[RMDB]
RNA sequence: GGGAACGACUCGAGUAGAGUCGAAAAGCCACCGUGUUCAAGCGCGGGGAGUCAAACGGGCACGACCCGAAACCCGGUGAUCUACGCGUGGGCAAGGUGAAGCAUGGCGAAAGCCAUGUGGAGGCCUGUUCCCUGUCGUAUUCGUACGACAGGGAACAAAAGAAACAACAACAACAAC
Reactivity to DMS in 0.01 (KOAc 150mM, MgCl2 10mM, bicine 150mM(pH8.5), 24C), signal-to-noise 2, nucleotides 027 to 126: g010c090c000a050c020c020g000u010g020u010u010c060a070a170g010c070g000c050g000g000g000g000a120g000u070c090a080a100a130c060g000g000g050c200a180c280g010a080c090c030c100g000a040a030a150c000c000c000g010g000u020g000a080u010c010u010a040c030g010c050g010u000g060g010g000c050a060a030g000g000u000g030a160a060g000c000a020u000g000g020c000g000a140a000a190g000c000c000a000u000g000u000g000g000a290g000g000c000c000u000
Reactivity to 2A3 in 0.01 (KOAc 150mM, MgCl2 10mM, bicine 150mM(pH8.5), 24C), signal-to-noise 4, nucleotides 027 to 126: g020c000c000a010c000c010g020u020g060u000u050c090a120a020g060c120g020c050g150g000g020g020a030g100u160c110a060a040a130c050g000g000g000c090a080c280g170a260c030c010c000g060a080a070a050c010c000c000g030g030u020g010a040u000c050u150a030c020g070c040g020u040g030g000g020c030a040a020g000g000u040g020a010a000g000c000a000u000g010g000c020g040a090a020a010g000c000c000a000u000g010u010g000g000a050g010g160c000c000u030